[RMDB]
RNA sequence: GGGAACGACUCGAGUAGAGUCGAAAAAUUGUUGGUGGAGCGCUGAUUGCACUGUCGUUUGUUCCGAUUCUAGCUCCCGUAUCAUCAAUCCUAUUGAAUAUGGGUGUUUCGAUGGCACUAGGCGGUGUCGUUCAAAUGCUAUCUGCUCAGCCAAGAGUCCGUCAAAUAGGUUCGCCUAUUUGACGGAAAAAGAAACAACAACAACAAC
Reactivity to DMS in 0.01 (KOAc 150mM, MgCl2 10mM, bicine 150mM(pH8.5), 24C), signal-to-noise 1, nucleotides 027 to 156: a060u010u010g000u010u000g010g000u010g000g000a070g030c070g020c050u020g000a080u010u000g000c020a100c090u010g010u000c030g040u010u010u010g030u000u010c060c010g010a140u000u010c030u010a110g030c020u000c030c020c030g040u000a030u000c040a120u010c030a040a090u030c100c060u000a230u000u000g020a140a080u000a030u010g010g020g000u010g010u000u000u010c080g000a060u000g010g000c020a010c020u000a100g040g020c030g040g010u000g010u010c070g010u010u010c030a030a050a060u000g020c010u000a040u010c040u000g020c030u000c040a070g000c030c020a020a140g010a150g000
Reactivity to 2A3 in 0.01 (KOAc 150mM, MgCl2 10mM, bicine 150mM(pH8.5), 24C), signal-to-noise 1, nucleotides 027 to 156: a000u180u140g020u040u010g040g000u020g050g020a010g040c040g000c150u040g020a030u120u210g030c010a000c020u020g020u070c050g040u030u040u150g050u070u050c030c000g030a080u100u020c020u060a020g030c000u070c000c030c000g020u010a030u030c030a000u000c000a080a040u080c030c110u220a060u120u050g030a030a010u010a000u020g020g020g000u000g010u010u080u040c050g000a020u020g010g010c000a000c050u020a000g000g080c060g000g030u000g010u010c020g000u100u050c010a040a140a010u100g040c060u090a030u090c000u050g010c000u010c010a020g000c000c000a030a000g040a020g120
An RNA of 207 nucleotides, treated with DMS and 2A3 and read out base by base. The DMS profile rests on 3,738 reads. The RNA was probed in 150 mM KOAc, 10 mM MgCl2 and 150 mM bicine (pH 8.5) at 24 C. Values cover nucleotides 27 to 156.